[RMDB]
RNA sequence: GGGAACGACUCGAGUAGAGUCGAAAAAAGCGUAAUGUUGACCCUUUGUCCAAUUUUGAACAUAAGGUUAUUACAGAGUGCGUUACCAUAGUUUUAGGUGACGCAAUUCAAGUAGCCAAGUGCUAUGUCAGCAGCAGGUUCGCCUGCUGCAAAAGAAACAACAACAACAAC
Reactivity to 2A3 in 0.01 (KOAc 150mM, MgCl2 10mM, bicine 150mM(pH8.5), 24C), signal-to-noise 3, nucleotides 027 to 129: a010a010g030c050g020u110a160a100u130g030u090u040g020a030c010c000c000u000u010u110g000u000c070c020a050a120u000u070u070u160g010a020a010c000a020u090a020a090g020g000u000u010a030u030u080a180c020a020g070a030g000u080g000c000g000u010u000a000c000c000a030u110a080g300u110u140u100u150a030g000g000u020g000a000c000g030c000a020a000u030u000c000a010a020g030u000a030g010c000c000a080a010g100u040g050c010u040a000u010g050u060c040a000
Reactivity to DMS in 0.01 (KOAc 150mM, MgCl2 10mM, bicine 150mM(pH8.5), 24C), signal-to-noise 1, nucleotides 027 to 129: a050a030g020c000g040u020a000a050u000g010u030u010g030a000c120c040c050u010u000u020g010u020c070c020a000a000u030u040u000u030g020a000a000c020a030u030a060a220g020g000u000u010a010u000u010a090c260a220g010a030g030u010g050c010g020u000u000a000c010c010a100u030a000g040u000u000u000u000a080g000g000u010g000a020c020g000c030a030a010u020u030c000a000a000g060u020a000g000c000c000a050a200g000u030g030c100u010a050u000g050u080c020a000
Chemical mapping of a 170-nucleotide RNA with 2A3 and DMS. Conditions: 150 mM KOAc, 10 mM MgCl2 and 150 mM bicine (pH 8.5), 24 C. Values cover nucleotides 27 to 129. For 2A3 the reverse transcriptase was SuperScript II with manganese.